[RMDB]
RNA sequence: GGGAACGACUCGAGUAGAGUCGAAAAACCUGAUGAUUCGUCAUCAGGUCACAUGCCGCCCGAACGGCUUCCUGACCGGGCGGAUUCACUUUAAAAGGAGCACUGCUGCAUCAUUCGUGAUGCAGAAGAUACACCAAGCAUUCGUGCUUGGUGUAUCAAAAGAAACAACAACAACAAC
Reactivity to 2A3 in 0.01 (KOAc 150mM, MgCl2 10mM, bicine 150mM(pH8.5), 24C), signal-to-noise 5, nucleotides 027 to 126: a000c000c000u000g000a000u000g000a010u000u090c180g060u010c080a000u000c010a000g000g000u010c010a080c000a050u170g020c000c000g000c000c000c000g000a030a020c050g060g000c000u160u090c000c000u010g010a020c000c010g000g000g010c010g010g000a010u090u050c050a040c100u150u270u280a120a200a030a020g020g000a000g010c010a020c120u150g000c010u000g000c010a000u000c000a010u010u140c190g110u030g010a000u000g000c000a000g000a000a000
Reactivity to DMS in 0.01 (KOAc 150mM, MgCl2 10mM, bicine 150mM(pH8.5), 24C), signal-to-noise 4, nucleotides 027 to 126: a040c000c000u010g010a010u000g010a030u000u010c190g020u000c010a000u000c000a000g000g010u000c060a050c170a130u010g000c000c000g000c010c010c000g020a030a120c040g000g010c010u000u010c000c010u000g010a140c110c010g000g000g020c000g010g000a010u000u010c090a070c230u000u010u020a070a070a050a040g010g000a040g010c010a220c240u010g010c000u000g000c000a010u000c000a040u000u000c200g000u010g010a010u000g000c000a000g000a040a050
The record gives the reactivity of an RNA of 177 nucleotides to 2A3 and DMS. Conditions: 150 mM KOAc, 10 mM MgCl2 and 150 mM bicine (pH 8.5), 24 C. Reactivities are given for positions 27 through 126. As a SHAPE reagent, 2A3 marks flexible, mostly unpaired nucleotides at the ribose 2'-OH.